The record gives the reactivity of an RNA of 207 nucleotides to 2A3 and DMS.
For 2A3 the reverse transcriptase was SuperScript II with manganese.
Conditions: 150 mM KOAc, 10 mM MgCl2 and 150 mM bicine (pH 8.5), 24 C.
Source: RMDB library RNAMAK, as collected in RNAgym.
The DMS profile rests on 1,882 reads.
RNA sequence: GGGAACGACUCGAGUAGAGUCGAAAAGCACUAGUUCGCUAGUGCGGACAUCCUAAGUCAUCGUGGGACUGGACAUGCUGCGUAUCGGAAACGAUAUACAGCAACAGCCAGUCCGUAACAUCGAUGAUAUGGAGAACGACAGUCGUUCGCGACUGAACAAGUAACUCACCUUCGGGUGAGUUACUUGAAAAGAAACAACAACAACAAC
Reactivity to 2A3 in 0.01 (KOAc 150mM, MgCl2 10mM, bicine 150mM(pH8.5), 24C), signal-to-noise 2, nucleotides 027 to 156: g000c000a000c000u000a010g060u170u130c180g070c200u010a000g000u000g000c000g000g000a030c030a060u020c000c000u030a150a040g040u000c000a000u000c000g000u030g010g020g000a020c000u000g010g000a030c030a100u070g000c000u000g010c010g040u010a000u000c010g000g030a080a040a060c000g000a000u000a000u000a040c000a010g040c000a040a020c020a050g100c010c000a000g000u000c000c010g000u010a000a000c020a130u190c020g000a000u000g010a010u000a000u040g000g000a080g080a090a000c020g110a000c020a000g010u010c000g000u020u090c170g020c010g200a010c080u140g050a080a010
Reactivity to DMS in 0.01 (KOAc 150mM, MgCl2 10mM, bicine 150mM(pH8.5), 24C), signal-to-noise 1, nucleotides 027 to 156: g070c000a010c000u000a000g000u000u000c300g070c050u010a010g030u000g010c000g000g030a120c020a150u000c010c000u000a030a190g020u010c020a030u000c030g070u010g120g010g000a010c010u050g000g000a040c010a300u000g000c000u000g040c000g040u000a000u000c000g000g000a260a250a300c000g000a010u000a020u000a050c020a000g010c000a000a020c130a280g000c020c050a020g000u000c010c010g030u010a050a150c070a040u000c000g020a020u000g000a020u000a250u010g000g000a040g010a100a090c040g010a260c110a070g000u000c010g010u000u030c140g020c000g000a300c000u000g000a150a210